The record gives the reactivity of an RNA of 207 nucleotides to 2A3. The 2A3 profile rests on 885 reads.
RNA sequence: GGGAACGACUCGAGUAGAGUCGAAAAAACAAACAUCAAAUCGCAUAGCAAAGAGUCAAAAAAAUAGAGAGCUUUGCGAGACCUACCAAGGGUGUAGAGAUACCAUCCAAGGAGCUGAAGAGAAAUCGAGAGCUCACGGCGUUCGCGCCGUGAGCAACUUACAUAAGACGUUCGCGUCUUAUGUAAGAAAAGAAACAACAACAACAAC
Reactivity to 2A3 in 0.01 (KOAc 150mM, MgCl2 10mM, bicine 150mM(pH8.5), 24C), signal-to-noise 2, nucleotides 027 to 156: a000a000c150a070a080a000c080a090u180c070a000a120a020u020c000g000c030a010u030a000g010c030a030a070a160g060a120g030u180c150a130a140a110a090a000a000a040u280a040g060a010g010a000g010c020u030u070u000g000c010g000a020g000a010c010c000u040a090c040c000a040a040g010g060g010u020g020u020a020g010a010g000a060u100a060c000c020a020u000c020c020a020a000g010g010a010g040c060u080g070a070a020g060a020g040a060a030a030u110c080g030a010g010a020g210c000u000c010a000c000g010g000c000g010u030u100c170g000c010g000c050c060g000u000g000a000g000c010a000a010
Annotation:
The reactions ran in a buffer of 150 mM KOAc, 10 mM MgCl2 and 150 mM bicine (pH 8.5), at 24 C. It was measured as part of the RMDB library M2RFPK. 2A3 adducts were read by reverse transcription with SuperScript II with manganese.